Structure probing data (2A3) for a 207-nucleotide construct. For 2A3, 834 sequencing reads were counted. Reactivities are given for positions 27 through 156. The RNA was probed in 150 mM KOAc, 10 mM MgCl2 and 150 mM bicine (pH 8.5) at 24 C. 2A3 adducts were read by reverse transcription with SuperScript II with manganese. It was measured as part of the RMDB library PDB130.
RNA sequence: GGGAACGACUCGAGUAGAGUCGAAAAAAGCUGCACUAGGCCUGUCACUACUAGUAAUAGUAUCCAACACAUACGGUACCGAUUACGUCCAAAACUUAAACCUUUUACAAUGCUAAAAAUUAUUAUCCCAACAACAAUACUACUACCCAUAACAUGACGUUCCAGUAAGGUUCGCCUUACUGGAACGAAAAGAAACAACAACAACAAC
Reactivity to 2A3 in 0.01 (KOAc 150mM, MgCl2 10mM, bicine 150mM(pH8.5), 24C), signal-to-noise 2, nucleotides 027 to 156: a000a000g020c030u080g030c020a010c050u040a010g010g000c020c000u020g020u040c050a010c060u090a000c020u040a020g000u070a000a080u030a070g030u010a040u040c000c030a120a000c040a010c040a060u190a080c020g050g020u030a050c010c040g050a070u080u040a020c030g080u040c040c000a040a020a060a090c050u140u160a070a090a090c020c010u050u140u020u020a060c080a010a090u080g050c000u110a100a060a030a080a030u130u080a060u110u060a020u120c000c000c000a040a030c010a020a000c010a010a060u060a080c000u010a010c000u040a030c000c000c020a060u060a090a080c040a070u100g080a060